Chemical mapping of a 177-nucleotide RNA with 2A3 and DMS. For 2A3 the reverse transcriptase was SuperScript II with manganese. Conditions: 150 mM KOAc, 10 mM MgCl2 and 150 mM bicine (pH 8.5), 24 C.
RNA sequence: GGGAACGACUCGAGUAGAGUCGAAAAGCUCGGUAAUCUAACGCGUAGCAAGCUUGUUCUAGAGCUUGCUUGCUUUGCGUGGAAAGUGAACUACUGUAUGUAGUUGGCUUUUAGAACAAGCGAAGAAGGGAAAUGUAUACUUCGGUAUACAUUUCCCAAAAGAAACAACAACAACAAC
Reactivity to 2A3 in 0.01 (KOAc 150mM, MgCl2 10mM, bicine 150mM(pH8.5), 24C), signal-to-noise 4, nucleotides 027 to 126: g030c010u040c030g090g080u160a110a110u070c060u070a100a020c010g020c000g030u020a000g000c020a040a000g010c010u020u040g060u160u060c100u180a050g020a030g200c020u020u010g000c000u000u000g000c000u040u030u110g020c000g010u030g010g060a040a010a010g010u110g050a020a010c010u030a010c030u120g080u300a190u300g010u000a060g020u000u040g060g000c020u000u010u020u050a000g020a060a050c050a050a000g030c020g030a040a030g110a100a120
Reactivity to DMS in 0.01 (KOAc 150mM, MgCl2 10mM, bicine 150mM(pH8.5), 24C), signal-to-noise 1, nucleotides 027 to 126: g000c010u000c010g060g060u010a070a090u000c030u010a090a020c000g020c000g010u030a050g010c000a020a000g010c000u000u000g030u000u010c080u040a120g050a070g010c000u000u020g020c030u000u000g000c000u020u020u000g000c030g000u000g010g010a010a010a010g020u000g020a000a010c000u000a000c000u020g020u000a050u070g030u000a000g000u000u000g000g000c000u030u000u000u000a070g000a090a110c000a100a010g000c030g030a090a100g010a130a110